[RMDB]
RNA sequence: GGGAACGACUCGAGUAGAGUCGAAAAGAUAUGGAGGCACCGAUCAUAGCGAGGAUCUAUACGCGGAGCUAUGUCGGAAACGACAUAGAACCUGUAUAGGGAGCUGGGAUCGGUGCCUCCUAAGUCACCCAAUUAUAAUGUUCGCAUUAUAAUUGGGAAAAGAAACAACAACAACAAC
Reactivity to DMS in 0.01 (KOAc 150mM, MgCl2 10mM, bicine 150mM(pH8.5), 24C), signal-to-noise 2, nucleotides 027 to 126: g000a030u000a190u010g000g000a010g010g010c000a020c000c000g010a020u000c000a250u010a050g030c000g010a070g010g000a010u010c000u000a010u000a010c000g020c250g020g000a080g020c000u000a000u000g000u000c000g000g010a030a020a080c010g020a010c000a010u000a010g000a020a020c000c000u000g010u000a010u000a010g000g000g000a010g030c000u000g020g030g010a010u000c000g000g020u000g000c010c010u000c000c000u000a000a060g000u000c020a300